RNA sequence: GGGAACGACUCGAGUAGAGUCGAAAAAUCGGCCCGUUCGCGGGCCGAUACAGGCGGAGCCUCGCACCUAGCGACCGGCGCAAGGACGCACGGUACUGCGAAUUGACUGUGGAUUCGUCCACAGUAACAUAAAGAUCACGUUCGCGUGAUCUUUAUGAAAAGAAACAACAACAACAAC
Reactivity to 2A3 in 0.01 (KOAc 150mM, MgCl2 10mM, bicine 150mM(pH8.5), 24C), signal-to-noise 4, nucleotides 027 to 126: a000u000c000g020g010c020c020c010g000u030u030c210g010c000g050g020g020c010c010g000a000u010a000c010a010g060g010c060g070g080a070g050c010c010u000c030g020c010a070c010c050u020a030g020c010g050a020c020c010g020g020c010g000c040a100a220g200g030a150c030g010c040a160c050g020g020u090a170c050u100g030c020g050a060a070u140u170g080a020c010u000g000u000g010g000a000u010u070c150g040u010c040c000a000c000a000g000u000a020a040
Reactivity to DMS in 0.01 (KOAc 150mM, MgCl2 10mM, bicine 150mM(pH8.5), 24C), signal-to-noise 5, nucleotides 027 to 126: a050u000c010g010g020c010c000c000g040u000u000c170g020c020g030g010g020c000c000g000a000u000a020c140a070g010g010c020g010g010a150g010c030c020u010c060g010c040a120c080c050u000a100g010c030g000a050c030c030g000g010c030g010c030a160a100g020g000a130c020g010c020a070c010g000g000u010a050c060u000g020c030g010a100a100u010u020g010a050c000u000g030u000g010g000a030u000u010c180g010u000c000c010a000c010a000g000u000a030a130

This 177-nucleotide RNA was probed chemically with 2A3 and DMS. The reactions ran in a buffer of 150 mM KOAc, 10 mM MgCl2 and 150 mM bicine (pH 8.5), at 24 C. It was measured as part of the RMDB library M2PK50.